The record gives the reactivity of an RNA of 177 nucleotides to DMS and 2A3. The RNA was probed in 150 mM KOAc, 10 mM MgCl2 and 150 mM bicine (pH 8.5) at 24 C. The data come from the RNA Mapping Database (RMDB), library VIROID.

RNA sequence: GGGAACGACUCGAGUAGAGUCGAAAAUGAGUGGAAACCCGCUUUAUUCACUGGGGUCGACAACUCUGGGGAGAAAAGGGCGGAUCGGAUGGGAAGAGUAUAUCCUAUGGGAAUCCCUGGUUUCCCCGUAUGUGAAAAGGUUCGCCUUUUCACAUACAAAAGAAACAACAACAACAAC
Reactivity to DMS in 0.01 (KOAc 150mM, MgCl2 10mM, bicine 150mM(pH8.5), 24C), signal-to-noise 4, nucleotides 027 to 126: u010g020a060g010u010g000g010a090a090a100c050c010c010g020c080u010u000u000a180u010u000c070a070c080u010g010g000g020g000u000c060g010a100c190a080a100c030u000c030u010g000g010g020g000a060g010a040a020a080a070g000g000g020c070g010g010a110u010c050g010g010a070u010g000g000g000a060a090g010a160g010u010a090u000a070u000c000c000u000a040u010g010g000g000a150a150u000c020c000c020u000g010g010u000u000u000c010c010c020c300
Reactivity to 2A3 in 0.01 (KOAc 150mM, MgCl2 10mM, bicine 150mM(pH8.5), 24C), signal-to-noise 3, nucleotides 027 to 126: u080g010a010g010u100g010g010a060a060a060c010c040c000g030c070u110u150u110a180u120u100c090a030c120u050g000g020g000g040u050c040g140a080c060a120a040c020u020c050u030g040g000g040g020a170g060a040a070a020a000g030g020g040c060g000g030a020u060c040g050g040a030u070g050g010g060a030a070g060a050g290u070a050u020a020u190c000c030u050a080u090g090g000g030a040a090u030c000c000c000u030g030g060u000u060u030c010c000c020c030